[RMDB]
Source information:
This 207-nucleotide RNA was probed chemically with 2A3. The reactions ran in a buffer of 150 mM KOAc, 10 mM MgCl2 and 150 mM bicine (pH 8.5), at 24 C.

RNA sequence: GGGAACGACUCGAGUAGAGUCGAAAAACUGAUACCUUACGAGGUAUCAGAAUGACUUCGUGGUAGAGCGCCACGAACGGAAAAUAAAGAAAGCUGGAUUGAAACGCACCGUGUACGCACGGUGCGAAAAAGUCGAUCCAGUUCGCUGGAUCGACAACCAUCGUCUUAUGUUCGCAUAAGACGAUGGAAAAGAAACAACAACAACAAC
Reactivity to 2A3 in 0.01 (KOAc 150mM, MgCl2 10mM, bicine 150mM(pH8.5), 24C), signal-to-noise 1, nucleotides 027 to 156: a000c000u010g000a000u010a000c000c000u020u010a100c250g120a020g000g000u000a000u000c000a000g020a020a040u120g040a040c030u000u040c020g000u000g010g010u050a120g010a000g100c020g000c000c000a000c020g000a000a010c040g050g030a110a050a000a000u080a070a030a030g250a020a050a000g000c020u030g000g180a210u140u190g120a130a110a040c020g010c000a010c000c010g010u010g000u010a030c160g000c040a000c040g000g080u000g020c000g000a000a000a000a000a000g000u010c000g000a000u000c000c000a020g020u020u000c080g010c010u010g000g000a000u000c000g000a000c000a000a000